[RMDB]
RNA sequence: GGGAACGACUCGAGUAGAGUCGAAAAACAAACUCAAAUGUCAGCAAGAAGCCGAAGUGACCGCAGUCACCAUCUCCCUUGCCAACCGCCUGGUGAGUGUAAGCCACAGCAGCCCGAGCUGUAAUUAUAUUAGCAGGCUUGUCAAAUGCCGUGGAGACAUGGAUAAUCCUUUCGAGGAUUAUCCAUGAAAAGAAACAACAACAACAAC
Reactivity to DMS in 0.01 (KOAc 150mM, MgCl2 10mM, bicine 150mM(pH8.5), 24C), signal-to-noise 2, nucleotides 027 to 156: a080c060a140a060a130c050u000c030a050a100a090u010g000u000c050a070g000c000a120a070g020a090a090g020c040c080g020a090a120g030u000g040a080c040c070g040c110a140g000u000c010a050c030c010a100u030c040u000c020c010c010u010u000g010c040c010a060a100c070c070g020c020c030u000g000g020u030g010a050g020u010g010u010a080a080g010c020c300a030c030a090g020c030a080g000c010c050c050g010a160g000c000u000g020u000a050a090u010u010a060u020a130u000u000a090g020c030a110g010g000c010u000u020g000u030c040a070a050a120u000g000c040c020g010u000g020g010a260g010a150
Reactivity to 2A3 in 0.01 (KOAc 150mM, MgCl2 10mM, bicine 150mM(pH8.5), 24C), signal-to-noise 3, nucleotides 027 to 156: a000c050a020a080a020c040u060c100a080a080a060u150g060u090c030a030g000c030a070a140g060a080a020g080c030c010g100a070a020g040u010g040a030c020c040g070c110a030g040u040c010a000c040c000a070u010c020u010c020c010c000u000u000g010c020c010a040a060c010c050g060c040c010u090g030g020u050g030a060g000u050g020u040a040a030g010c050c010a010c010a010g030c010a010g030c000c020c040g050a020g000c000u000g010u030a020a000u100u040a050u030a020u060u150a030g040c040a030g020g020c000u060u060g030u010c020a040a050a060u080g020c040c030g040u050g010g030a030g010a000

Source: RMDB library OK3TST, as collected in RNAgym. Structure probing data (DMS and 2A3) for a 207-nucleotide construct. The 2A3 profile rests on 1,942 reads. High DMS reactivity at an A or C suggests that its Watson-Crick edge is free. The RNA was probed in 150 mM KOAc, 10 mM MgCl2 and 150 mM bicine (pH 8.5) at 24 C.